[RMDB]
RNA sequence: GGGAACGACUCGAGUAGAGUCGAAAAUGCACCGGGAUCCGAUCUUUCAUUGCCUCUACAUGGCUUAUCACCCCAAUAGUUUUGCCGGAAGCAUUCAGGCUAUCCAAGGCAUCCAGUGCGGUAUCCAGCGCAGUGAGUGAUUCGUCACUCACUGCGCAAAAGAAACAACAACAACAAC
Reactivity to DMS in 0.01 (KOAc 150mM, MgCl2 10mM, bicine 150mM(pH8.5), 24C), signal-to-noise 1, nucleotides 027 to 126: u010g010c040a060c050c050g020g060g010a050u020c030c030g000a190u000c040u000u000u030c050a050u000u000g030c100c000u000c100u000a150c110a080u010g000g010c000u000u000a070u000c150a300c150c000c050c090a030a130u000a100g000u000u010u000u020g070c020c020g030g000a090a060g010c080a070u020u000c150a120g000g060c050u000a100u000c010c040a070a040g000g030c070a030u000c050c080a130g000u000g020c050g000g000u000a050u000c070c000a030
Source: RMDB library OK2TRN, as collected in RNAgym. Structure probing data (DMS) for a 177-nucleotide construct. For DMS the reverse transcriptase was MarathonRT. The DMS profile rests on 675 reads.